Description
An RNA of 177 nucleotides, treated with DMS and read out base by base. For DMS, 2,471 sequencing reads were counted.
RNA sequence: GGGAACGACUCGAGUAGAGUCGAAAAUUUUGGCCGGUUGUGGGCGAGGAGGGAUUCGAACCCCCGACACCGUGGUUCGUAGCCACGUGCUCUAAUCCUCUGAGCUACAGGCCCCACCCCGUCUCCAAAAUGUAAGAGCUUUCGAGCUCUUACAUUUAAAAGAAACAACAACAACAAC
Reactivity to DMS in 0.01 (KOAc 150mM, MgCl2 10mM, bicine 150mM(pH8.5), 24C), signal-to-noise 3, nucleotides 027 to 126: u010u000u010u020g020g010c050c070g000g020u020u000g000u000g020g010g020c040g000a300g000g010a040g000g000g010a080u020u000c140g010a090a300c040c000c010c000c050g010a080c030a030c130c080g000u000g000g000u000u000c300g010u010a260g020c000c000a010c020g020u000g000c090u000c050u000a050a050u000c010c000u000c030u000g000a300g000c000u000a040c040a170g010g000c020c000c060c050a070c010c010c010c010g020u010c030u000c030c130a040